Annotation:
This 207-nucleotide RNA was probed chemically with DMS and 2A3. For 2A3, 9,617 sequencing reads were counted. For DMS the reverse transcriptase was MarathonRT. For DMS, 4,456 sequencing reads were counted. The data come from the RNA Mapping Database (RMDB), library M2RFPK.

[RMDB]
RNA sequence: GGGAACGACUCGAGUAGAGUCGAAAAUCGAAAUCAUCGGGAGUGAUCCAGAUGACGGUCCUGCCAUGAGACCGCAACGAGAGCAUGUCGCAUCGAAUGGACUCGGGGAAUCGGCAGCUUGCCCCACUAAGGCAGACGUUGUUCGCAACGUCUGCAACCUACCAUAGUUCUUCGGAACUAUGGUAGGAAAAGAAACAACAACAACAAC
Reactivity to DMS in 0.01 (KOAc 150mM, MgCl2 10mM, bicine 150mM(pH8.5), 24C), signal-to-noise 2, nucleotides 027 to 156: u000c020g020a130a110a090u000c000a020u000c010g050g010g000a020g000u020g000a270u000c000c040a090g000a030u000g000a040c030g000g000u010c010c000u010g070c050c130a130u010g000a140g020a070c020c040g020c050a070a140c030g010a150g010a140g040c060a090u010g010u000c030g000c040a150u000c050g000a090a300u000g020g000a110c090u000c040g000g030g040g020a100a050u000c020g020g020c050a080g000c070u010u010g000c020c000c010c010a080c110u010a080a080g020g000c010a020g000a030c000g000u010u010g020u000u000c280g000c010a070a020c030g010u000c000u000g010c010a000a030
Reactivity to 2A3 in 0.01 (KOAc 150mM, MgCl2 10mM, bicine 150mM(pH8.5), 24C), signal-to-noise 7, nucleotides 027 to 156: u060c010g010a010a000a040u020c010a010u020c020g010g010g000a030g060u130g030a100u020c010c000a020g020a030u020g010a010c000g000g000u000c010c020u040g110c040c020a120u150g040a040g010a080c000c010g020c070a030a100c040g030a010g010a010g090c050a120u090g040u110c040g020c080a090u070c050g080a040a040u070g040g070a070c040u010c100g050g010g000g020a040a070u080c030g020g000c020a000g010c020u050u100g030c010c010c000c010a050c060u100a060a070g130g000c000a000g000a000c000g000u000u010g020u030u080c130g010c120a000a000c000g000u000c000u000g000c000a000a000